RNA sequence: GGGAACGACUCGAGUAGAGUCGAAAAAGUGAGAUAUGUAAAUUCAGUAACCCUCCUAUGACGUAAAUGGUACGCUACUAACGAAUAAUAAAGUCAAAGGGCGUAGUUAUAGGGUAUGCCGGAUGAACGAUUCUUAUAAGUUCGCUUAUAAGAAUCGAAAAGAAACAACAACAACAAC
Reactivity to DMS in 0.01 (KOAc 150mM, MgCl2 10mM, bicine 150mM(pH8.5), 24C), signal-to-noise 7, nucleotides 027 to 126: a080g020u000g010a070g010a110u010a050u010g010u020a060a080a060u000u000c020a050g010u000a130a150c030c020c020u010c010c010u000a030u000g000a020c020g010u010a050a060a090u010g010g030u000a020c010g010c010u000a020c010u000a060a020c010g010a080a090u010a120a130u000a090a100a140g010u000c010a010a050a020g000g000g000c010g020u000a040g000u000u000a030u000a030g000g010g010u000a050u010g020c040c030g010g010a070u010g010a080a160
Reactivity to 2A3 in 0.01 (KOAc 150mM, MgCl2 10mM, bicine 150mM(pH8.5), 24C), signal-to-noise 6, nucleotides 027 to 126: a000g150u110g040a110g020a070u130a070u200g090u140a070a120a070u070u040c010a000g070u040a100a120c020c010c000u030c010c000u020a030u020g010a000c010g080u100a070a090a090u130g080g030u040a000c000g000c010u030a010c000u000a050a000c010g040a010a020u220a150a020u130a040a070a000g000u010c000a100a260a070g010g000g000c000g000u000a030g000u000u010a010u010a010g050g000g010u060a050u100g030c020c000g050g030a060u060g020a070a020
An RNA of 177 nucleotides, treated with DMS and 2A3 and read out base by base. For DMS the reverse transcriptase was MarathonRT. The RNA was probed in 150 mM KOAc, 10 mM MgCl2 and 150 mM bicine (pH 8.5) at 24 C. Reactivities are given for positions 27 through 126.